[RMDB]
RNA sequence: GGGAACGACUCGAGUAGAGUCGAAAAUCAUCGUUCUUCGGAACGAUGAAGUAUAACGCGGCCUCCGGACACAGGCGUAGCUGGCCUGGGAUAGUCACAGUAUGGGGCAAACUUUCGAGUUUGCCAAAGAUGUGGGUUUAUUCGUAAACCCACAUCUAAAAGAAACAACAACAACAAC
Reactivity to 2A3 in 0.01 (KOAc 150mM, MgCl2 10mM, bicine 150mM(pH8.5), 24C), signal-to-noise 2, nucleotides 027 to 126: u020c000a000u010c010g010u010u000c010u020u020c210g100g000a000a010c000g010a000u000g000a000a000g010u040a110u040a210a020c060g030c030g050g040c000c010u040c010c040g090g040a020c040a000c000a080g000g050c040g060u050a030g090c090u070g090g000c010c000u000g010g010g020a070u120a080g030u040c020a000c020a060g050u130a100u180g170g020g000g090c030a000a000a000c000u020u040u030c090g000a000g020u000u000u070g000c000c000a040a060
Reactivity to DMS in 0.01 (KOAc 150mM, MgCl2 10mM, bicine 150mM(pH8.5), 24C), signal-to-noise 2, nucleotides 027 to 126: u000c000a020u000c000g000u000u000c000u000u010c200g030g010a000a000c000g020a010u000g010a000a070g010u010a110u010a060a090c100g010c060g000g000c000c040u000c030c030g010g010a080c090a100c030a040g010g000c020g010u000a080g010c070u000g000g010c010c010u000g000g000g020a100u010a070g000u000c040a060c080a070g030u010a070u000g010g010g000g010c000a010a000a000c010u000u000u020c170g010a020g010u000u000u000g000c000c020a040a090

Structure probing data (2A3 and DMS) for a 177-nucleotide construct. For DMS, 3,963 sequencing reads were counted. DMS adducts were read by reverse transcription with MarathonRT. The reactions ran in a buffer of 150 mM KOAc, 10 mM MgCl2 and 150 mM bicine (pH 8.5), at 24 C. For 2A3 the reverse transcriptase was SuperScript II with manganese.